[RMDB]
RNA sequence: GGGAACGACUCGAGUAGAGUCGAAAAGAGUCCUAUUUCGAUAGGACUCAACUAAAAUCAGCGGUAAAUAAUUUGCUGGCGUUACCGCUGAACGCCAGCAUACUAGCCUCGUCUUCGGACGAGGCAAUUCCUAACAUUGAUUCGUCAAUGUUAGGAAAAAAGAAACAACAACAACAAC
Reactivity to DMS in 0.01 (KOAc 150mM, MgCl2 10mM, bicine 150mM(pH8.5), 24C), signal-to-noise 5, nucleotides 027 to 126: g000a010g010u000c000c000u000a010u000u000u010c140g020a030u000a010g010g010a020c000u010c000a040a080c090u020a050a060a100a110u000c010a000g010c000g020g010u010a020a040a030u000a020a030u000u000u000g010c000u000g000g010c010g010u000u010a070c040c010g000c000u000g010a020a020c010g000c000c000a000g010c010a130u020a040c200u010a110g010c000c000u000c000g010u000c000u000u010c170g020g000a020c000g000a000g000g000c000a000a010
Reactivity to 2A3 in 0.01 (KOAc 150mM, MgCl2 10mM, bicine 150mM(pH8.5), 24C), signal-to-noise 3, nucleotides 027 to 126: g020a010g000u000c000c000u000a030u010u090u060c180g070a020u000a000g000g040a000c000u000c000a000a000c020u040a010a030a010a110u020c010a000g050c040g220g230u230a050a090a100u100a020a140u090u090u250g000c000u000g000g010c000g000u010u020a100c020c010g000c000u000g000a000a000c000g000c000c000a000g000c010a010u060a030c090u120a050g000c000c000u000c000g020u000c000u030u060c190g100g010a010c010g000a000g000g000c010a000a000